Record summary:
Source: RMDB libraries RFM100 and RFMREP, as collected in RNAgym. Structure probing data (DMS and 2A3) for a 177-nucleotide construct. For DMS the reverse transcriptase was MarathonRT.
[RMDB]
RNA sequence: GGGAACGACUCGAGUAGAGUCGAAAAGAAAGAAAGUAAUGAUGAGAAAUACAAUGAAGAGCCAAUGUCCAUCUCAAAAUACUGCUUUUACAAAAGCAGAAUAAAAGCGAAAUGAAAUGAAAAUGAACAUCACAUACACGUUCGCGUGUAUGUGAUGAAAAGAAACAACAACAACAAC
Reactivity to DMS in 0.01 (KOAc 150mM, MgCl2 10mM, bicine 150mM(pH8.5), 24C), signal-to-noise 3, nucleotides 027 to 126: g010a090a130a030g010a070a060a140g000u000a030a050u000g030a150u010g030a110g000a070a060a090u010a070c100a040a110u020g020a100a070g000a120g010c040c040a070a090u010g020u000c040c010a050u000c040u010c040a130a100a040a030u000a080c020u000g020c020u010u000u000u040a150c240a050a090a000a010g010c020a030g000a080a090u000a030a050a020a180g000c080g030a010a060a070u010g000a020a080a020u040g000a050a030a070a070u050g000a100a130
Reactivity to 2A3 in 0.01 (KOAc 150mM, MgCl2 10mM, bicine 150mM(pH8.5), 24C), signal-to-noise 3, nucleotides 027 to 126: g080a000a070a000g100a050a020a020g030u110a040a070u080g110a010u060g030a010g010a060a120a010u110a030c040a020a130u090g030a070a070g010a010g080c040c020a000a020u080g040u000c000c010a100u020c010u010c010a060a170a000a000u120a080c020u010g070c000u020u080u120u060a080c080a010a070a030a000g000c040a000g000a020a000u040a010a050a000a010g060c060g020a070a040a020u090g080a000a050a090u220g070a070a100a050a050u120g020a040a010